[RMDB]
RNA sequence: GGGAACGACUCGAGUAGAGUCGAAAACAAUGCAGGUUAAGCCAAAGGGAUGUCCCGACCGGAUGCCGACAAUCCAGGGAACCGGAUGUCAUCACGUUGUUGCAGUACCAGAUGGCAUCUUAAAUCCAAAAGAACACAUAGUUCGCUAUGUGUUCAAGAUAUUUUCCUUCUUCGGAAGGAAAAUAUCAAAAGAAACAACAACAACAAC
Reactivity to DMS in 0.01 (KOAc 150mM, MgCl2 10mM, bicine 150mM(pH8.5), 24C), signal-to-noise 1, nucleotides 027 to 156: c080a090a120u000g030c060a090g040g010u010u010a080a130g040c020c050a040a090a080g010g020g020a090u000g000u020c050c000c010g000a090c080c020g030g000a040u000g000c010c070g040a080c050a090a080u000c020c000a130g000g030g030a030a100c060c030g000g010a060u050g000u000c010a040u010c010a240c250g020u000u000g010u000u000g010c000a080g030u020a060c070c040a060g010a050u000g010g000c010a040u000c000u010u020a040a070a170u010c020c020a050a060a120a160g020a040a000c010a010c000a010u000a020g010u010u000c300g040c000u000a000u000g000u000g000u000u000c000a050a090
The record gives the reactivity of an RNA of 207 nucleotides to DMS. The RNA was probed in 150 mM KOAc, 10 mM MgCl2 and 150 mM bicine (pH 8.5) at 24 C. Reactivities are given for positions 27 through 156. Source: RMDB library M2RFPK, as collected in RNAgym.